[RMDB]
RNA sequence: GGGAACGACUCGAGUAGAGUCGAAAAGGAAGGGUGAAACGCGGUAACCUCCACCUGGAGCAAUCCCAAAUAGGCAGGCGAUGAAGCGGCCCGCUGAGUCUGCGGGUAGGGAGCUGGAGCCGGCUGGCAUUGUAUUCGUCUUCGGACGAAUACAAUGAAAAGAAACAACAACAACAAC
Reactivity to 2A3 in 0.01 (KOAc 150mM, MgCl2 10mM, bicine 150mM(pH8.5), 24C), signal-to-noise 1, nucleotides 027 to 126: g030g010a010a050g010g030g000u060g040a120a050a010c050g000c040g000g020u020a060a070c010c000u000c000c030a050c000c060u020g010g020a020g000c050a040a100u050c010c010c020a000a100a070u170a040g000g000c000a010g000g020c000g040a060u090g060a060a010g010c010g000g010c000c040c030g000c000u050g010a080g180u040c080u070g020c030g000g010g010u070a100g070g080g010a080g000c020u040g000g030a020g000c020c040g000g010c010u030g010g030
Reactivity to DMS in 0.01 (KOAc 150mM, MgCl2 10mM, bicine 150mM(pH8.5), 24C), signal-to-noise 3, nucleotides 027 to 126: g000g010a170a110g010g020g000u000g000a040a050a120c110g010c050g020g000u010a110a140c110c030u000c030c040a100c060c010u000g000g010a220g020c120a140a100u000c010c010c020a090a100a080u000a080g010g000c000a020g000g020c010g010a110u010g010a110a080g020c020g010g010c030c030c030g000c020u010g010a150g010u010c100u000g010c010g010g000g030u010a060g010g010g010a120g010c040u010g010g010a240g010c020c010g010g010c040u000g010g020

The data come from the RNA Mapping Database (RMDB), library RFMREP. An RNA of 177 nucleotides, treated with 2A3 and DMS and read out base by base. For DMS, 2,422 sequencing reads were counted. The reactions ran in a buffer of 150 mM KOAc, 10 mM MgCl2 and 150 mM bicine (pH 8.5), at 24 C. Values cover nucleotides 27 to 126.